RNA sequence: GGGAACGACUCGAGUAGAGUCGAAAACUUUGCGUGGUUGUGAAACGGUCUCAUCGCCGACUAUUGUAGUGCCUGUAGUCGAUCCCAAGCCCACACACUAUUUUGUGCGAUGUCACUCCAUGAACUGCGUAAUGCCCUCAUUCGUGAGGGCAUUACGAAAAGAAACAACAACAACAAC
Reactivity to DMS in 0.01 (KOAc 150mM, MgCl2 10mM, bicine 150mM(pH8.5), 24C), signal-to-noise 2, nucleotides 027 to 126: c060u040u040u000g040c070g040u000g020g020u030u050g040u030g010a100a100a100c130g020g000u030c050u030c010a010u000c020g000c020c120g030a060c100u040a020u010u010g010u000a040g000u010g060c000c020u000g040u000a060g010u000c050g010a040u050c020c050c010a070a120g010c100c060c030a060c140a090c070a050c020u000a050u000u040u000u010g030u090g000c000g010a120u080g010u000c010a100c010u010c050c090a020u070g000a040a050c160u000g000
Reactivity to 2A3 in 0.01 (KOAc 150mM, MgCl2 10mM, bicine 150mM(pH8.5), 24C), signal-to-noise 3, nucleotides 027 to 126: c020u040u020u140g000c030g030u040g020g070u010u020g030u010g080a090a040a030c070g000g040u070c030u020c000a020u010c030g030c070c030g070a040c030u040a070u090u190g070u110a080g030u010g130c020c020u000g030u070a030g000u000c000g030a060u070c000c000c000a020a000g040c050c000c000a020c000a000c000a020c040u080a190u040u110u050u130g150u080g010c000g040a030u090g000u040c010a020c030u000c030c000a020u040g080a090a040c070u120g000
Structure probing data (DMS and 2A3) for a 177-nucleotide construct. Source: RMDB library OK1LIB, as collected in RNAgym.